The record gives the reactivity of an RNA of 207 nucleotides to DMS and 2A3. Source: RMDB library OK3TST, as collected in RNAgym. The RNA was probed in 150 mM KOAc, 10 mM MgCl2 and 150 mM bicine (pH 8.5) at 24 C. DMS (dimethyl sulfate) methylates the pairing face of unpaired adenines and cytosines. For 2A3 the reverse transcriptase was SuperScript II with manganese.

RNA sequence: GGGAACGACUCGAGUAGAGUCGAAAAUAAAUAAUGACUAAUGUGGUUUUUGGUUGUUAUCAGUUGGUUACGGAUUGGAGUUAACAUUUCAUCAGAUCUGAGCAAUAACCUAUGUGGUAAAGUCCUAGUGUGGCAGGAAUUUGGGAUUCAAGGGGGGCACCAGCAAAUGAUUCGUCAUUUGCUGGUGAAAAGAAACAACAACAACAAC
Reactivity to DMS in 0.01 (KOAc 150mM, MgCl2 10mM, bicine 150mM(pH8.5), 24C), signal-to-noise 1, nucleotides 027 to 156: u010a050a060a120u000a070a020u000g000a090c010u010a060a080u020g000u000g030g010u000u000u000u020u000g020g020u020u010g030u000u010a080u000c010a100g030u010u000g000g010u000u000a140c180g040g000a070u000u000g010g050a030g050u000u000a070a190c020a070u000u000u010c050a080u000c030a050g040a040u010c110u020g010a160g030c090a050a060u000a030a080c020c010u000a000u000g020u010g040g000u000a050a070a130g010u000c010c010u000a020g040u010g010u000g010g040c020a050g040g000a040a130u010u010u010g030g010g000a190u000u000c060a080a140g000g010g040g050g000g010
Reactivity to 2A3 in 0.01 (KOAc 150mM, MgCl2 10mM, bicine 150mM(pH8.5), 24C), signal-to-noise 1, nucleotides 027 to 156: u070a020a090a070u140a050a040u050g020a030c040u100a080a140u090g030u030g080g120u000u040u080u060u140g040g000u010u010g030u030u020a160u140c090a080g000u000u000g010g000u010u020a030c180g100g010a000u000u000g000g000a020g000u030u040a040a070c000a000u000u030u140c090a050u000c000a000g020a040u040c000u030g070a010g040c050a020a100u050a070a030c000c000u040a060u180g110u140g060g020u040a070a140a040g000u010c000c000u000a000g000u000g000u050g010g000c020a020g020g000a040a010u080u000u000g000g000g020a000u120u020c040a060a080g010g010g000g000g010g000
For DMS, 2,000 sequencing reads were counted.